An RNA of 177 nucleotides, treated with 2A3 and read out base by base. For 2A3, 761 sequencing reads were counted.
RNA sequence: GGGAACGACUCGAGUAGAGUCGAAAACAUUCGAUGAUGGCAUUCGUAGCGUGGACACCACUUGGGUUUGCUGCUGCUGUUGCUGCGACGGUCCAUUUGUGUCCGGCAGCUCGGCAAUGUCCUUGAACGCCACUCCGGUAUUCGUACCGGAGUGGCGAAAAGAAACAACAACAACAAC
Reactivity to 2A3 in 0.01 (KOAc 150mM, MgCl2 10mM, bicine 150mM(pH8.5), 24C), signal-to-noise 1, nucleotides 027 to 126: c000a020u050u120c070g140a080u100g010a040u180g040g020c030a050u080u040c050g120u170a000g010c000g060u060g070g010a030c040a110c080c050a070c100u060u170g140g000g000u070u040u190g040c030u110g000c040u000g000c040u040g100u210u050g040c000u040g020c030g130a090c020g040g000u040c030c040a070u110u100u200g130u020g000u030c000c000g020g010c040a020g000c010u010c010g000g050c030a060a080u010g010u000c020c060u030u100g090a080a020